[RMDB]
RNA sequence: GGGAACGACUCGAGUAGAGUCGAAAAGAUGCCACAAUGGGUGAUCCGCAGCCAAGUCCUAAGGCAACAGGCCUCUUCCCGCCCGUGGGGGAGAGUGUCCCGCGCUAUGGAUGCAGUUCAACGACUAAACGGUGAUGGGCUAGCGUAAUGAAUGCGUAGUAAUUCCUAUGUUCGCAUAGGAAUUACUAAAAGAAACAACAACAACAAC
Reactivity to DMS in 0.01 (KOAc 150mM, MgCl2 10mM, bicine 150mM(pH8.5), 24C), signal-to-noise 3, nucleotides 027 to 156: g010a090u000g000c000c020a090c100a110a110u010g020g020g020u000g010a070u010c030c020g010c070a090g000c010c040a100a250g000u000c020c030u020a100a190g010g020c000a110a150c080a030g030g010c020c000u000c020u000u000c020c010c020g030c070c040c150g000u010g010g010g000g010g000a000g010a040g040u000g010u000c000c000c020g020c270g010c040u000a300u010g010g020a050u000g000c070a060g000u000u010c060a030a110c050g030a200c050u000a070a070a070c040g020g000u000g000a120u000g000g020g040c040u000a050g040c010g020u000a050a110u000g000a100a100u000g000c040g000u000
Reactivity to 2A3 in 0.01 (KOAc 150mM, MgCl2 10mM, bicine 150mM(pH8.5), 24C), signal-to-noise 5, nucleotides 027 to 156: g040a020u060g030c040c010a060c040a080a150u140g040g010g010u070g040a060u040c010c010g030c040a020g000c010c020a040a020g010u020c000c010u070a100a090g030g010c010a020a020c010a040g010g000c000c000u020c000u010u000c010c000c010g200c060c050c050g110u300g060g020g000g000g010a010g000a000g000u010g020u060c010c000c010g030c020g000c030u030a030u110g010g010a020u040g010c040a020g000u040u060c050a080a020c060g090a070c040u180a140a080a030c070g050g040u060g030a080u090g030g000g000c030u030a050g020c020g020u070a050a070u180g100a110a020u100g040c030g010u000